RNA sequence: GGGAACGACUCGAGUAGAGUCGAAAACAAUUAACGGCACCUCGUAGGUGGUGCCGAACCUGCGUGAUCUACUAACACGCUACGAGCAGUCUGGUAUGACUGCAAACAAUUAGUAGACUGGAUGAAACGUACCCACCAGGUUCGCCUGGUGGGUACGAAAAGAAACAACAACAACAAC
Reactivity to 2A3 in 0.01 (KOAc 150mM, MgCl2 10mM, bicine 150mM(pH8.5), 24C), signal-to-noise 2, nucleotides 027 to 126: c040a010a090u150u110a120a020c030g000g000c000a000c000c000u130c020g120u260a190g150g090u000g000g000u000g010c000c000g000a000a040c000c000u000g000c020g000u000g000a100u100c000u020a020c020u000a000a000c000a000c000g100c040u190a060c000g030a030g000c030a000g030u000c000u170g060g240u300a200u240g000a030c010u000g040c000a000a010a010c010a000a090u000u000a000g000u000a000g000a080c020u040g080g000a080u050g090a140a160a030
Source: RMDB library OK1LIB, as collected in RNAgym. The record gives the reactivity of an RNA of 177 nucleotides to 2A3. The 2A3 profile rests on 673 reads. For 2A3 the reverse transcriptase was SuperScript II with manganese. The reactions ran in a buffer of 150 mM KOAc, 10 mM MgCl2 and 150 mM bicine (pH 8.5), at 24 C.